Structure probing data (DMS and 2A3) for a 177-nucleotide construct. For DMS, 4,356 sequencing reads were counted. Source: RMDB library M2PK90, as collected in RNAgym. High DMS reactivity at an A or C suggests that its Watson-Crick edge is free. For 2A3, 5,212 sequencing reads were counted.
[RMDB]
RNA sequence: GGGAACGACUCGAGUAGAGUCGAAAAAUUCAGGAGAGUAGAUGAUUCGCGUUAAGUGUGUGUGAAUGGGAUGUCGUCACACAACGAAGCGAGAGCGCGGUGAAUCAUUGCAUCCGCUGCAAACGAACCCAGAGACAUAAUUCGUUAUGUCUCUGGGAAAAGAAACAACAACAACAAC
Reactivity to DMS in 0.01 (KOAc 150mM, MgCl2 10mM, bicine 150mM(pH8.5), 24C), signal-to-noise 4, nucleotides 027 to 126: a110u000u000c060a130g000g010a030g000a080g000u000a210g010a020u000g000a040u000u000c010g010c010g040u010u020a070a130g010u010g010u000g010u000g000u000g010a030a060u000g020g010g000a040u000g010u010c130g000u000c010a010c010a010c000a010a040c040g020a100a080g030c030g010a170g000a140g010c000g020c060g010g010u000g010a010a010u000c020a020u000u000g000c070a060u000c010c020g000c030u000g000c150a060a060a100c150g000a060a120
Reactivity to 2A3 in 0.01 (KOAc 150mM, MgCl2 10mM, bicine 150mM(pH8.5), 24C), signal-to-noise 3, nucleotides 027 to 126: a000u080u030c040a020g040g020a010g040a010g010u050a030g010a060u020g000a010u030u010c020g000c000g020u020u090a050a050g010u040g000u010g010u010g000u000g070a060a070u050g000g020g050a040u060g080u150c070g030u010c010a010c000a000c000a010a040c030g020a050a000g020c040g020a040g000a010g010c010g010c010g030g030u030g040a000a010u020c010a010u000u030g010c010a030u000c010c020g010c030u050g040c040a070a050a060c050g050a020a030

For DMS the reverse transcriptase was MarathonRT.